[RMDB]
RNA sequence: GGGAACGACUCGAGUAGAGUCGAAAAAGCUGGUACGCCAGCAAAUUGUGAGACCUCCGGCUACAACACAGGACAUGGGAGCUUUUCUGAACCCUCGUGUCUUGUGUUGCAGCCAGAGGGGCACAAAGUUACCUUAACUCUUCGGAGUUAAGGUAACAAAAGAAACAACAACAACAAC
Reactivity to 2A3 in 0.01 (KOAc 150mM, MgCl2 10mM, bicine 150mM(pH8.5), 24C), signal-to-noise 9, nucleotides 027 to 126: a010g020c010u010g010g010u060a050c250g070c050c010a000g000c020a030a050a030u040u020g010u000g010a070g100a080c000c000u000c000c010g000g000c000u000a010c000a000a000c000a000c000a000g010g000a000c000a000u020g000g010g010a100g060c060u130u130u170u130c130u180g140a100a080c010c000c000u040c030g000u000g000u000c000u000u000g000u000g000u000u000g000c000a000g000c000c000a000g000a000g000g000g010g000c000a000c000a010a070a010
Reactivity to DMS in 0.01 (KOAc 150mM, MgCl2 10mM, bicine 150mM(pH8.5), 24C), signal-to-noise 3, nucleotides 027 to 126: a090g020c010u000g000g020u020a080c190g030c010c000a000g020c000a020a040a050u020u000g010u000g010a110g000a080c000c010u000c010c040g000g010c000u010a030c010a010a010c000a010c000a000g010g020a020c000a010u000g000g020g010a040g000c080u000u010u020u060c250u050g020a050a090c040c010c000u000c000g050u000g010u000c000u000u000g010u000g000u000u000g010c040a000g010c010c000a000g010a010g010g000g010g000c000a010c010a010a040a130
The record gives the reactivity of an RNA of 177 nucleotides to 2A3 and DMS. The data come from the RNA Mapping Database (RMDB), libraries RFM100 and RFMREP. DMS adducts were read by reverse transcription with MarathonRT. The RNA was probed in 150 mM KOAc, 10 mM MgCl2 and 150 mM bicine (pH 8.5) at 24 C.